[RMDB]
An RNA of 177 nucleotides, treated with DMS and 2A3 and read out base by base.
RNA sequence: GGGAACGACUCGAGUAGAGUCGAAAAUGCAUUGCAAGGUCCUUACACUCAAGAAAUGAAGCUUCAGCUUGUCACGAAAUUGCUUUCAAUUUCAAAUCCAAUUGGGAUCAAGGAUAGUGAUGGCAAGCACCAGUUUCACUUUCGAGUGAAACUGGUGAAAAGAAACAACAACAACAAC
Reactivity to DMS in 0.01 (KOAc 150mM, MgCl2 10mM, bicine 150mM(pH8.5), 24C), signal-to-noise 3, nucleotides 027 to 126: u020g000c020a070u000u000g000c030a130a090g000g010u000c020c010u010u000a100c220a090c060u000c040a120a070g020a060a020a100u000g010a070a080g000c030u020u000c160a090g000c020u000u000g020u000c060a060c110g010a040a110a110u000u000g000c220u010u000u010c010a030a010u000u000u010c050a050a070a100u030c220c130a030a110u000u000g000g000g000a050u000c080a070a090g010g010a030u000a150g030u010g000a090u000g010g000c040a030a050g010
Reactivity to 2A3 in 0.01 (KOAc 150mM, MgCl2 10mM, bicine 150mM(pH8.5), 24C), signal-to-noise 3, nucleotides 027 to 126: u020g030c030a020u040u190g060c040a070a050g100g040u020c000c000u040u090a050c090a020c050u090c020a070a110g030a090a090a050u180g040a060a020g020c030u100u090c070a040g010c030u050u140g010u040c010a000c080g030a050a060a070u080u040g030c040u060u110u130c020a030a040u000u020u070c100a150a170a090u000c070c040a040a160u050u050g080g000g010a020u040c040a030a030g060g000a000u110a060g010u040g030a070u020g030g000c040a030a010g000
The RNA was probed in 150 mM KOAc, 10 mM MgCl2 and 150 mM bicine (pH 8.5) at 24 C. For 2A3, 1,906 sequencing reads were counted.